Notes:
Structure probing data (DMS and 2A3) for a 177-nucleotide construct. 2A3 adducts were read by reverse transcription with SuperScript II with manganese. For DMS, 4,778 sequencing reads were counted. For DMS the reverse transcriptase was MarathonRT. High DMS reactivity at an A or C suggests that its Watson-Crick edge is free.
RNA sequence: GGGAACGACUCGAGUAGAGUCGAAAAAGGUCGCCGGCGAAUUUCUCCAGCGCGAACUUGUGCGCCUUCUCGACAUCCUGCUCCGCACGCCGGCGUACGUUCUGCAGAUCCGCGACCAUGCGCAGCAUGACCCUACUCAUUUCGAUGAGUAGGGUCAAAAAGAAACAACAACAACAAC
Reactivity to DMS in 0.01 (KOAc 150mM, MgCl2 10mM, bicine 150mM(pH8.5), 24C), signal-to-noise 4, nucleotides 027 to 126: a090g010g010u000c010g030c010c010g010g030c020g020a130a120u000u010u010c020u000c060c090a110g010c050g010c030g020a050a070c120u000u000g010u010g000c040g010c030c080u010u000c040u000c060g010a120c090a070u000c040c020u000g000c040u000c040c040g000c060a200c030g000c010c020g000g010c010g010u000a020c030g000u000u000c020u010g000c060a080g000a090u000c070c030g020c060g000a080c060c050a090u000g010c040g010c080a070g020c140a120
Reactivity to 2A3 in 0.01 (KOAc 150mM, MgCl2 10mM, bicine 150mM(pH8.5), 24C), signal-to-noise 2, nucleotides 027 to 126: a000g040g020u000c020g010c020c030g010g000c040g060a050a110u040u080u060c040u020c010c000a010g020c040g010c060g060a050a040c080u140u140g060u050g050c030g030c010c040u060u050c060u030c010g030a030c010a030u060c010c000u020g040c010u010c010c030g030c010a060c040g000c010c020g010g000c010g000u050a010c010g010u040u010c000u050g020c000a030g030a110u040c020c010g020c030g050a080c010c030a040u070g000c020g010c000a040g120c020a050